[RMDB]
RNA sequence: GGGAACGACUCGAGUAGAGUCGAAAAUGAAGCAAAUCCAUAAUUGCCAAUGAUGAGCGAUUCGCUAUUGCCGCCUAAAAACGGUUAGCCGGGGCUGCUAGAGCCUUGUUACCAAAGAUAGCCGGCGUUACGGCAUGAUGGUUCGCCAUCAUGCCAACUCUAUUAACGACUUCGGUCGUUAAUAGAGAAAAGAAACAACAACAACAAC
Reactivity to 2A3 in 0.01 (KOAc 150mM, MgCl2 10mM, bicine 150mM(pH8.5), 24C), signal-to-noise 4, nucleotides 027 to 156: u120g040a030a010g050c030a060a020a070u100c040c030a070u120a130a140u170u100g050c050c050a080a080u180g060a060u080g010a080g020c040g050a110u060u100c060g020c050u070a080u090u180g010c000c000g000c000c020u060a060a040a000a010a010c000g020g000u030u040a010g000c020c030g030g000g000g000c010u050g010c060u140a100g040a000g180c000c000u020u020g050u040u040a030c000c020a080a010a010g080a070u030a020g040c030c030g010g030c010g030u070u100a050c120g010g000c010a010u000g010a000u000g010g010u020u030c150g040c030c000a010u000c000a000u010g010c000c000a000a000
Reactivity to DMS in 0.01 (KOAc 150mM, MgCl2 10mM, bicine 150mM(pH8.5), 24C), signal-to-noise 2, nucleotides 027 to 156: u000g040a200a140g000c040a020a090a110u000c010c070a060u020a050a110u000u000g040c050c020a120a110u000g000a110u000g020a080g020c040g040a050u000u000c090g000c020u000a080u010u000g030c000c000g050c070c050u000a080a070a110a120a080c010g000g000u000u000a060g000c040c040g040g020g030g000c010u010g030c050u000a080g010a100g040c000c030u000u000g010u000u000a170c170c080a080a050a120g000a120u000a080g020c020c070g000g040c070g020u000u000a080c110g010g040c010a020u030g000a010u000g000g030u000u020c300g050c050c000a000u010c000a040u000g000c000c000a000a010
Overview:
An RNA of 207 nucleotides, treated with 2A3 and DMS and read out base by base. In probing experiments dimethyl sulfate is read out at A N1 and C N3, which are open when not base-paired. It was measured as part of the RMDB library M2RFPK. Conditions: 150 mM KOAc, 10 mM MgCl2 and 150 mM bicine (pH 8.5), 24 C.